Structure probing data (DMS) for a 177-nucleotide construct. DMS adducts were read by reverse transcription with MarathonRT. The RNA was probed in 150 mM KOAc, 10 mM MgCl2 and 150 mM bicine (pH 8.5) at 24 C.
RNA sequence: GGGAACGACUCGAGUAGAGUCGAAAAUACACACCAAAUUGUUGAGACUUUCCAGUUCUCAGGGAACAAUAGAAACCAGUCUUCAGGAUAUCGACAGCAGAUUAUCUCCAGGUGGAUCACUGGCAGAUCAUUCCCUACGCUUCGGCGUAGGGAAUGAAAAAGAAACAACAACAACAAC
Reactivity to DMS in 0.01 (KOAc 150mM, MgCl2 10mM, bicine 150mM(pH8.5), 24C), signal-to-noise 1, nucleotides 027 to 126: u000a130c160a160c070a180c010c100a070a110a080u000u000g000u000u000g000a190g000a070c110u000u000u020c120c160a100g070u000u000c000u000c010a030g040g030g010a070a030c080a020a050u040a080g000a130a120a070c000c050a040g030u000c010u000u000c010a060g010g020a140u000a020u000c070g010a050c130a130g020c070a050g010a030u000u000a060u000c050u000c000c010a040g000g000u000g000g000a100u010c070a050c070u000g010g000c090a020g000a040